[RMDB]
RNA sequence: GGGAACGACUCGAGUAGAGUCGAAAAGGAAAAAUCACCUCCAGAGGACCCCUUCAGCGAACAGAAGAGCCCCGCACGGGAUAGGAGUAAGACCAUAGCGAUGGGGGGAGAUGCUAGGAGUUGGGGGCAGGGACCAGGUUCGCCUGGUCCAAAAGAAACAACAACAACAAC
Reactivity to DMS in 0.01 (KOAc 150mM, MgCl2 10mM, bicine 150mM(pH8.5), 24C), signal-to-noise 1, nucleotides 027 to 129: g040g000a050a020a000a120a150u040c060a100c020c010u050c000c060a000g020a100g050g040a210c120c060c020c100u010u150c040a080g020c000g010a130a070c070a220g040a070a020g000a100g000c000c010c010c020g070c150a040c090g000g000g000a030u050a030g020g020a070g010u040a030a060g020a120c020c030a140u030a080g050c130g010a140u010g040g000g000g040g000g020a090g020a110u090g030c030u020a130g000g020a130g000u020u020g060g080g030g060g000c080a070g050
Reactivity to 2A3 in 0.01 (KOAc 150mM, MgCl2 10mM, bicine 150mM(pH8.5), 24C), signal-to-noise 3, nucleotides 027 to 129: g030g030a070a020a010a050a200u060c020a020c010c000u060c040c000a030g000a160g120g030a210c030c000c000c000u080u060c070a070g000c000g030a050a020c040a050g160a150a000g020a120g040c010c000c000c020g140c050a060c030g030g010g070a060u190a190g020g010a000g030u190a020a000g070a050c020c020a040u090a030g100c080g050a130u130g000g000g000g040g060g010a050g000a030u110g020c000u000a030g000g040a000g060u040u070g030g000g010g020g000c000a010g000